The record gives the reactivity of an RNA of 207 nucleotides to 2A3.
RNA sequence: GGGAACGACUCGAGUAGAGUCGAAAACACAGGAUCGUCUGGAAGUCCUGCUCGGGGCGGAAGCAUUAAAACCAUUCGAGCUAGUCAAUGCGUGGCGUGUCUCUCCGCAGCGUGUUGGCGAAUGUAACAAGCUGCCUCUCGUUCGCGAGAGGCAGAACCCAACUAGGAGGUUCGCCUCCUAGUUGGGAAAAGAAACAACAACAACAAC
Reactivity to 2A3 in 0.01 (KOAc 150mM, MgCl2 10mM, bicine 150mM(pH8.5), 24C), signal-to-noise 1, nucleotides 027 to 156: c100a000c000a000g050g010a150u090c050g180u060c090u040g100g070a150a040g020u040c010c010u000g010c000u000c010g000g050g000g000c090g040g070a020a020g100c130a040u140u210a020a060a000a090c010c010a020u080u070c000g000a020g030c070u020a010g040u020c000a020a010u020g000c020g010u040g030g000c030g020u080g120u020c150u040c010u000c080c000g000c000a050g000c000g000u010g020u010u000g030g010c000g000a030a020u140g120u100a010a130c060a090a000g000c000u010g050c020c000u000c000u010c000g060u040u090c220g010c000g040a000g000a000g010g030c000a000g000a000a010